The record gives the reactivity of an RNA of 177 nucleotides to DMS and 2A3. The reactions ran in a buffer of 150 mM KOAc, 10 mM MgCl2 and 150 mM bicine (pH 8.5), at 24 C. It was measured as part of the RMDB library OK1LIB. For DMS the reverse transcriptase was MarathonRT. Reactivities are given for positions 27 through 126.
[RMDB]
RNA sequence: GGGAACGACUCGAGUAGAGUCGAAAAGUCGGUCAUGGUCCCGGCCGACGGUACCGGGGAGCGAACAAAAGGGGUUGGGCUUGCGAGGGUCGGCCCCCCGAUCGUCAGCGUCGCCGUUUGGCGAUCGGAUUUAAUCGAGUUUCGACUCGAUUAAAUCAAAAGAAACAACAACAACAAC
Reactivity to DMS in 0.01 (KOAc 150mM, MgCl2 10mM, bicine 150mM(pH8.5), 24C), signal-to-noise 9, nucleotides 027 to 126: g010u010c010g010g000u000c020a090u030g020g000u010c020c010c040g010g010c000c010g000a020c010g010g010u020a060c040c030g010g000g000g010a090g000c050g000a090a100c150a060a050a100a100g000g000g010g010u010u010g010g010g000c040u000u010g020c100g000a190g000g000g000u000c010g000g010c010c000c000c010c000c000g000a000u000c010g010u000c000a010g000c010g000u020c300g000c290c020g010u000u030u020g020g000c000g000a000u000c000g000
Reactivity to 2A3 in 0.01 (KOAc 150mM, MgCl2 10mM, bicine 150mM(pH8.5), 24C), signal-to-noise 9, nucleotides 027 to 126: g010u010c010g010g020u030c040a110u160g080g000u060c000c000c000g000g010c000c000g010a010c010g010g020u050a050c020c010g000g010g020g010a050g040c060g030a060a060c050a050a100a040a040g030g020g000g020u060u090g090g020g000c020u040u060g020c050g030a090g000g020g010u020c000g010g000c000c000c000c000c000c000g000a000u000c000g010u000c000a010g000c010g170u300c100g060c160c020g030u190u210u090g000g000c000g000a000u000c000g010